[RMDB]
RNA sequence: GGGAACGACUCGAGUAGAGUCGAAAAAGAAUAGUACAGCUUUUCCAUUUGAAACACUUUCAGCAUGUCGUGCGUAUUUGGAUUCACGCACGACACAGCAGUUAACAAUCGAAGUCUUAGUGACUGUGUAUCAGGGGCUUCGGCCCCUGAAAAAGAAACAACAACAACAAC
Reactivity to 2A3 in 0.01 (KOAc 150mM, MgCl2 10mM, bicine 150mM(pH8.5), 24C), signal-to-noise 2, nucleotides 027 to 129: a000g000a010a050u020a000g050u020a060c050a100g070c020u000u000u060u130c000c000a020u100u000u090g030a010a010a000c080a000c000u140u160u120c010a030g000c000a140u090g000u000c000g030u000g040c000g000u030a090u050u140u090g050g140a050u240u040c060a000c000g000c030a000c000g000a000c000a000c080a020g000c000a000g020u090u090a080a050c040a040a010u020c000g120a030a000g100u000c030u090u300a210g000u050g000a000c000u000g040u000g000u050a010
Reactivity to DMS in 0.01 (KOAc 150mM, MgCl2 10mM, bicine 150mM(pH8.5), 24C), signal-to-noise 3, nucleotides 027 to 129: a010g060a070a140u030a060g030u010a100c070a100g040c000u000u000u000u000c020c040a140u000u040u060g050a090a020a080c160a130c120u120u030u000c120a000g030c040a300u010g040u000c000g010u000g000c010g030u030a050u070u080u070g060g030a000u000u000c030a060c040g030c000a020c000g060a000c030a030c110a050g040c000a080g040u000u000a070a130c110a100a110u010c070g020a020a060g000u030c040u000u040a070g020u030g000a060c020u000g000u040g030u060a080

The record gives the reactivity of an RNA of 170 nucleotides to 2A3 and DMS.
Conditions: 150 mM KOAc, 10 mM MgCl2 and 150 mM bicine (pH 8.5), 24 C.
Source: RMDB library 15KLIB, as collected in RNAgym.
For DMS, 6,178 sequencing reads were counted.